RNA sequence: GGGAACGACUCGAGUAGAGUCGAAAAAUAGGGCACAAAAGUGAGCUUAAUCAUAACCCAUGAAAAAGUUAGGCCGAGGUGUCGCCUACGUGACGGUCAAAGAUGGGCUACAUUUUCUAUUAUAGAACUAUCCCAGUCGUUUCGACGACUGGGAUAGAAAAGAAACAACAACAACAAC
Reactivity to DMS in 0.01 (KOAc 150mM, MgCl2 10mM, bicine 150mM(pH8.5), 24C), signal-to-noise 1, nucleotides 027 to 126: a020u060a000g000g000g000c000a040c110a020a090a030a110g030u040g000a050g020c000u000u000a070a020u040c020a110u060a100a120c060c060c040a150u000g000a020a040a050a090a020g000u000u000a030g000g000c180c010g000a160g000g020u000g010u030c120g000c020c000u000a030c050g030u080g020a030c040g020g000u070c180a040a060a080g000a060u000g020g040g000c110u000a030c000a080u000u000u000u020c060u000a020u010u000a240u020a100g050a110a080
Reactivity to 2A3 in 0.01 (KOAc 150mM, MgCl2 10mM, bicine 150mM(pH8.5), 24C), signal-to-noise 2, nucleotides 027 to 126: a000u080a020g000g000g000c080a030c030a030a030a000a000g030u040g040a030g090c010u040u030a130a060u060c030a020u010a150a190c000c000c000a030u120g110a000a050a000a110a000g050u100u080a040g030g000c040c000g060a170g060g050u210g060u120c030g000c000c000u030a030c000g070u070g000a050c050g000g000u060c040a150a000a000g140a160u000g000g000g070c010u040a000c060a000u120u030u040u000c030u030a120u050u060a160u200a240g030a090a000